[RMDB]
RNA sequence: GGGAACGACUCGAGUAGAGUCGAAAACGAGGACACCCAGACCGCGUCCUUCUCCGGCGGCGCGGCGGCAGCGCAGCAGCAGGGAGCCGGCAGCAGCGCGGCGGCAGUGCAGCAGCAGGGAGCCGGCGCAAUAAUAAAGUUUCGACUUUAUUAUUGCAAAAGAAACAACAACAACAAC
Reactivity to DMS in 0.01 (KOAc 150mM, MgCl2 10mM, bicine 150mM(pH8.5), 24C), signal-to-noise 6, nucleotides 027 to 126: c090g000a080g010g010a110c120a100c040c010c030a140g000a140c060c050g020c020g000u000c020c040u000u000c050u010c060c060g000g010c130g010g010c030g010c010g020g010c030g010g010c040a060g000c030g010c030a060g010c040a060g010c040a070g000g010g000a150g020c040c050g010g010c030a070g020c060a080g010c050g010c020g010g010c030g000g020c040a070g000u010g010c040a090g010c030a080g010c040a060g010g010g010a130g010c020c020g010g000c130
Reactivity to 2A3 in 0.01 (KOAc 150mM, MgCl2 10mM, bicine 150mM(pH8.5), 24C), signal-to-noise 2, nucleotides 027 to 126: c030g040a080g040g030a020c020a050c030c020c010a010g070a090c030c010g030c010g020u020c020c000u130u090c070u040c030c020g050g000c030g010g000c010g010c000g020g010c010g040g000c020a040g010c020g000c030a040g000c010a010g000c000a010g060g040g040a030g040c000c000g030g020c000a030g020c020a020g010c050g010c000g040g000c000g040g000c050a040g040u040g050c030a050g000c030a020g010c020a020g020g050g050a020g010c020c000g010g000c030